[RMDB]
RNA sequence: GGGAACGACUCGAGUAGAGUCGAAAAGUCGUGGUUAAACAGUGCCAUCACCAGAUUACCGGUCAGCACCGUUUCUGACUGUCCGUCCGUCAUCACCCGUGUGGAGGCCAGCGCCUCCACCUGACGAGCUCCUAACAUCGUUCGCGAUGUUAGGAGCAAAAGAAACAACAACAACAAC
Reactivity to DMS in 0.01 (KOAc 150mM, MgCl2 10mM, bicine 150mM(pH8.5), 24C), signal-to-noise 2, nucleotides 027 to 126: g020u000c020g040u010g010g000u010u000a060a040a000c030a030g000u000g020c010c060a120u000c230a060c030c020a060g010a240u010u010a140c200c040g040g020u000c140a180g000c030a020c020c010g000u000u000u000c020u010g000a000c030u000g000u000c060c020g000u020c080c030g000u000c030a060u000c130a070c080c030c080g000u020g050u000g010g020a000g010g000c000c050a180g020c200g020c020c000u010c000c010a000c000c090u000g000a030c070g000a170
Reactivity to 2A3 in 0.01 (KOAc 150mM, MgCl2 10mM, bicine 150mM(pH8.5), 24C), signal-to-noise 2, nucleotides 027 to 126: g030u040c040g050u070g110g030u160u160a050a170a030c010a010g050u030g090c020c010a060u130c040a020c030c000a000g040a170u090u160a100c070c030g050g000u040c020a000g010c020a030c030c030g020u000u060u010c030u050g050a040c000u000g080u060c000c020g060u040c050c030g020u040c000a080u080c010a060c040c040c030g090u090g000u000g100g010a010g000g000c010c040a210g040c140g020c030c000u070c000c000a000c000c010u010g020a010c000g030a050
This 177-nucleotide RNA was probed chemically with DMS and 2A3. DMS adducts were read by reverse transcription with MarathonRT. The DMS profile rests on 1,321 reads. For 2A3, 1,517 sequencing reads were counted. The reactions ran in a buffer of 150 mM KOAc, 10 mM MgCl2 and 150 mM bicine (pH 8.5), at 24 C. For 2A3 the reverse transcriptase was SuperScript II with manganese. It was measured as part of the RMDB library OK2TST.